[RMDB]
RNA sequence: GGGAACGACUCGAGUAGAGUCGAAAAGGGGUCUCAUGCAACAGCGACCCUACAGCGAAGAACUACACUGAAGCCUCCACGGUGUAGGGAGCUGUAGUGGUCGACAUGCAUGAGACGGAGGCACCCAAAGCAUUGCAUGCUUCGGCAUGCAAUGCAACCGCAUUAACACGUUCGCGUGUUAAUGCGGAAAAGAAACAACAACAACAAC
Reactivity to 2A3 in 0.01 (KOAc 150mM, MgCl2 10mM, bicine 150mM(pH8.5), 24C), signal-to-noise 1, nucleotides 027 to 156: g000g000g060g030u020c010u010c000a010u000g030c070a120a100c060a300g170c020g000a000c000c000c000u000a000c000a010g000c020g130a300a000g010a000a000c000u000a000c000a000c010u050g040a060a000g010c050c000u000c000c000a020c010g000g040u000g010u010a000g000g000g010a010g030c010u020g010u030a010g020u110g070g010u000c000g030a010c000a010u110g010c000a000u000g000a000g000a010c010g000g000a010g000g010c020a050c010c000c030a070a060a000g000c000a000u000u000g000c000a000u020g000c000u030u050c130g100g000c000a010u000g000c000a000a000u000g010c000a000a000

Record summary:
Chemical mapping of a 207-nucleotide RNA with 2A3. The data come from the RNA Mapping Database (RMDB), library RNAMAK. For 2A3 the reverse transcriptase was SuperScript II with manganese. The 2A3 profile rests on 2,532 reads.